[RMDB]
RNA sequence: GGGAACGACUCGAGUAGAGUCGAAAACCACUUCUCGAGGACCUCUUCCCUCCCUCCGCGGAGUCUCUUCGUCUCGGACCGGCUCAUCUCGACAAGAGGCGGCAGUCCUCAGUGCUCUUACUCUUUUCUGUAAAGAGGAGACUGCUGGACUCGCCGCGCCAAGUAAAUGGUUCGCCAUUUACUUGGCAAAAGAAACAACAACAACAAC
Reactivity to 2A3 in 0.01 (KOAc 150mM, MgCl2 10mM, bicine 150mM(pH8.5), 24C), signal-to-noise 2, nucleotides 027 to 156: c010c010a020c010u080u070c010u020c050g070a080g100g050a300c020c000u000c010u050u050c000c000c020u010c000c000c000u040c020c060g040c020g000g060a060g010u000c040u010c020u100u090c070g110u010c030u030c070g030g030a060c020c000g060g000c010u030c020a120u020c030u040c020g070a060c060a150a050g010a010g080g040c000g000g000c000a000g000u000c020c010u020c000a070g000u130g180c010u000c000u070u150a220c000u050c000u060u130u170u060c110u250g240u250a000a040a000g010a000g000g000a010g020a000c000u000g030c100u000g000g000a000c000u010c070g000c000c000g000c000

Background:
This 207-nucleotide RNA was probed chemically with 2A3. For 2A3 the reverse transcriptase was SuperScript II with manganese.